RNA sequence: GGGAACGACUCGAGUAGAGUCGAAAACUCGAGGACCUCUUCUCUUCCUCCGCGAUUCUUCUUCGACUCGGACCGGCUCAUCUCGACAAGAGGCGGCAAUCCUCAGUGCUCUUACUCUUUUCUGAUAAAGUGGAGACUGCUGGACUCGCCGCCCAAGCCUAAGCAAGGUGUUCGCACCUUGCUUAGGAAAAGAAACAACAACAACAAC
Reactivity to 2A3 in 0.01 (KOAc 150mM, MgCl2 10mM, bicine 150mM(pH8.5), 24C), signal-to-noise 2, nucleotides 027 to 156: c050u050c050g010a010g000g030a130c010c030u070c080u260u100c090u080c040u120u070c010c010u050c030c010g010c020g050a080u110u010c020u100u020c020u110u090c030g020a040c000u000c020g020g100a000c000c000g130g000c120u040c050a180u040c090u050c070g020a040c020a070a110g090a130g050g000c000g000g000c000a000a040u000c000c000u020c010a010g030u130g280c000u020c030u060u300a090c000u050c060u120u130u250u050c110u110g160a260u150a300a080a000g010u000g000g000a010g000a000c000u000g050c030u010g010g000a000c000u030c150g000c020c000g000c000c000c000a000a010g000